[RMDB]
RNA sequence: GGGAACGACUCGAGUAGAGUCGAAAAGAUAUGGACCAGUUUGGACAUGGUGCACACUCGGAAACGAGUGUGAUACCAACAGCCAACGGCUGGUCCUAAGUCAAAGGAGAACACUUCGGUGUUCUCCGUCACCACCGUUCUUCGGAACGGUGGUGACAAAAGAAACAACAACAACAAC
Reactivity to DMS in 0.01 (KOAc 150mM, MgCl2 10mM, bicine 150mM(pH8.5), 24C), signal-to-noise 1, nucleotides 027 to 126: g010a030u000a000u020g000g020a020c000c000a010g020u000u010u000g010g000a010c010a300u010g020g000u010g000c000a000c000a000c000u000c000g000g000a020a010a010c010g020a030g000u000g030u000g000a030u010a030c010c010a100a020c080a070g000c010c000a010a020c300g000g020c000u000g000g020u000c010c000u000a000a080g000u000c000a080a160a200g000g000a040g010a000a010c000a010c000u000u000c210g050g000u000g020u000u010c000u000c000c000
Reactivity to 2A3 in 0.01 (KOAc 150mM, MgCl2 10mM, bicine 150mM(pH8.5), 24C), signal-to-noise 2, nucleotides 027 to 126: g000a000u000a010u090g000g000a000c010c000a020g000u000u000u010g120g020a200c280a300u300g000g000u000g000c000a000c000a000c000u000c000g000g040a000a010a010c000g000a010g000u010g000u000g000a000u020a000c010c010a080a010c030a040g030c000c000a010a040c100g040g000c010u030g000g000u000c010c000u010a010a000g010u000c020a130a140a110g010g000a020g000a020a000c000a010c030u090u170c300g190g000u010g000u000u000c000u030c000c000